Structure probing data (DMS and 2A3) for a 177-nucleotide construct. The 2A3 profile rests on 5,153 reads. The RNA was probed in 150 mM KOAc, 10 mM MgCl2 and 150 mM bicine (pH 8.5) at 24 C. Reactivities are rounded to 0.1 and cut off at 0 and 3.

[RMDB]
RNA sequence: GGGAACGACUCGAGUAGAGUCGAAAAGUGUAACAGGAAGAAAGUUGCAGCAUAUACGCGGUGAAUUAUUCGGUGUCAUAGGAGUAGAGUCUUUUGGUAAGAUGCUGAUAAUGAGUAGGGGAGAUGACUAUGUAGUUAGCUUCGGCUAACUACAUAGAAAAGAAACAACAACAACAAC
Reactivity to DMS in 0.01 (KOAc 150mM, MgCl2 10mM, bicine 150mM(pH8.5), 24C), signal-to-noise 7, nucleotides 027 to 126: g020u000g010u000a080a050c070a070g010g010a090a080g000a080a100a090g000u000u010g010c040a060g000c070a060u000a090u000a090c120g020c070g000g010u000g010a070a060u000u010a060u010u000c070g020g010u010g010u000c050a070u010a060g010g000a060g010u010a080g000a090g010u000c020u000u000u000u000g020g020u000a050a070g010a030u000g010c040u010g010a050u000a040a060u000g010a080g010u010a050g000g010g010g000a080g010a050u000g010a210
Reactivity to 2A3 in 0.01 (KOAc 150mM, MgCl2 10mM, bicine 150mM(pH8.5), 24C), signal-to-noise 5, nucleotides 027 to 126: g050u030g030u050a060a040c040a040g060g120a090a060g040a060a120a010g030u050u040g020c030a010g000c040a060u090a010u030a130c070g000c030g020g070u060g050a050a060u130u040a060u090u150c040g030g000u020g030u020c040a040u060a100g030g000a020g050u080a040g040a030g100u020c030u030u140u070u060g050g010u030a080a040g020a070u050g030c030u030g030a040u030a140a080u090g050a010g030u050a040g030g000g020g000a040g000a020u050g020a030

About this RNA: Source: RMDB library RFMREP, as collected in RNAgym.